Chemical mapping of a 170-nucleotide RNA with DMS and 2A3. High 2A3 reactivity points to a flexible backbone, as in loops and unpaired stretches. For DMS the reverse transcriptase was MarathonRT. Conditions: 150 mM KOAc, 10 mM MgCl2 and 150 mM bicine (pH 8.5), 24 C. For 2A3 the reverse transcriptase was SuperScript II with manganese.
[RMDB]
RNA sequence: GGGAACGACUCGAGUAGAGUCGAAAAGGGUGAUCCACCCGGAGAUGAGCGGAGAAACCACAUCCAGAGGACCCCUUCGACGAACAGAAGACCCUGGACCGGGAGGGAAUAGCCCAUAGUACAAGGGAUAGCAAUCUCUUCGGAGAUUGCAAAAGAAACAACAACAACAAC
Reactivity to DMS in 0.01 (KOAc 150mM, MgCl2 10mM, bicine 150mM(pH8.5), 24C), signal-to-noise 2, nucleotides 027 to 129: g040g000g060u060g000a140u040c010c040a100c020c010c020g000g000a120g000a100u070g020a120g070c060g030g000a120g000a010a000a000c000c010a130c090a000u040c000c050a060g000a100g000g010a020c100c110c070c020u020u030c060g040a100c070g000a130a100c220a090g000a080a050g000a030c000c000c000u030g030g010a060c090c000g000g000g060a070g000g000g000a070a090u010a100g000c040c030c030a020u010a080g000u070a040c070a090a120g000g020g020a070u030a120
Reactivity to 2A3 in 0.01 (KOAc 150mM, MgCl2 10mM, bicine 150mM(pH8.5), 24C), signal-to-noise 4, nucleotides 027 to 129: g010g020g010u080g040a070u000c010c000a010c010c040c000g010g000a080g020a130u110g040a040g060c010g050g080a100g060a130a040a020c010c000a050c010a050u000c020c020a010g050a120g040g060a060c010c010c000c020u030u000c020g090a090c030g080a140a040c010a080g020a060a000g020a020c000c000c000u010g000g000a010c010c020g000g030g000a100g030g010g000a020a020u040a120g000c000c010c000a020u070a060g100u070a020c040a080a040g040g010g020a050u090a040